RNA sequence: GGGAACGACUCGAGUAGAGUCGAAAAGCGUACUACUAGUAGCUGGUGAUCUCCGUACUCCCCACCUUGAUCCCAAAUAGGAUCAAGAGGUACGGAUCUCACCAGAACUACUACUAGUAUCGCAAAAGGAGGGUGAAUCUUCGGAUUCACCCUCCAACCAUUCUACUCUGUUCGCAGAGUAGAAUGGAAAAGAAACAACAACAACAAC
Reactivity to 2A3 in 0.01 (KOAc 150mM, MgCl2 10mM, bicine 150mM(pH8.5), 24C), signal-to-noise 2, nucleotides 027 to 156: g000c000g020u030a040c020u000a010c000u000a010g000u000a000g010c000u000g000g010u000g000a020u010c000u000c030c000g000u000a000c050u150c070c030c020c010a050c000c010u000u000g000a000u020c010c000c020a210a280a200u300a190g000g000a000u000c000a000a000g010a000g000g000u000a000c000g000g000a000u000c020u010c010a010c000c020a020g000a010a050c020u030a000c010u000a000c000u000a000g000u010a010u150c030g000c030a040a040a000a130g000g000a020g010g000g000u010g010a000a000u010c010u060u150c230g050g000a000u000u010c000a000c000c000c000u000c000c000a000a000
Reactivity to DMS in 0.01 (KOAc 150mM, MgCl2 10mM, bicine 150mM(pH8.5), 24C), signal-to-noise 2, nucleotides 027 to 156: g000c000g050u000a000c000u000a000c040u000a030g020u000a010g000c010u000g020g020u000g010a030u000c050u050c010c010g000u000a000c030u000c270c090c030c090a300c300c030u000u010g020a020u000c010c000c020a080a190a190u000a150g000g030a010u000c000a030a020g000a170g030g000u000a020c000g010g020a000u000c090u000c000a020c000c010a030g010a000a070c010u010a040c000u000a010c000u000a010g000u000a000u000c050g050c010a060a070a100a160g010g010a020g020g030g020u010g000a030a010u000c000u000u030c300g050g010a030u000u010c000a010c010c000c000u000c000c000a000a000
This 207-nucleotide RNA was probed chemically with 2A3 and DMS.
For DMS, 2,900 sequencing reads were counted.